[RMDB]
RNA sequence: GGGAACGACUCGAGUAGAGUCGAAAAAAGGAUCUAUCGAAGCUGGUACAAUGAUUUUAUCAUUGUAGAAGUCAAAACAAUCCAAAAGAAACCGUCAAAUAGUGAUUCGGGUGGCACUUUUAUUUUCGAGAUGAUACAAGUUCGCUUGUAUCAUCUCAAAAGAAACAACAACAACAAC
Reactivity to 2A3 in 0.01 (KOAc 150mM, MgCl2 10mM, bicine 150mM(pH8.5), 24C), signal-to-noise 2, nucleotides 027 to 126: a000a010g020g000a010u010c010u040a030u120c110g040a050a010g010c020u030g080g090u000a000c000a020a000u000g060a050u040u120u300u300a050u030c000a000u010u000g000u010a040g060a040a000g030u050c010a000a000a060a030c000a000a040u000c000c000a000a060a000a060g090a070a070a010c020c040g030u050c050a030a120a090u060a030g070u030g040a060u110u090c050g100g070g060u010g040g000c020a010c030u000u170u060u110a180u090u120u040u050c060
Reactivity to DMS in 0.01 (KOAc 150mM, MgCl2 10mM, bicine 150mM(pH8.5), 24C), signal-to-noise 2, nucleotides 027 to 126: a090a110g010g000a030u000c110u010a140u030c070g000a220a120g010c000u000g000g010u000a010c010a010a030u000g000a050u000u010u000u020a050u000c000a000u000u000g020u000a000g000a140a040g020u000c040a040a080a060a020c230a080a040u000c000c010a070a080a090a120g000a100a100a100c050c050g010u000c090a050a070a070u020a060g000u000g020a100u000u000c070g000g000g020u000g010g000c060a020c040u000u010u000u000a080u000u020u010u010c140
This 177-nucleotide RNA was probed chemically with 2A3 and DMS. For 2A3, 1,186 sequencing reads were counted. Conditions: 150 mM KOAc, 10 mM MgCl2 and 150 mM bicine (pH 8.5), 24 C. Source: RMDB library RFMREP, as collected in RNAgym. 2A3 adducts were read by reverse transcription with SuperScript II with manganese.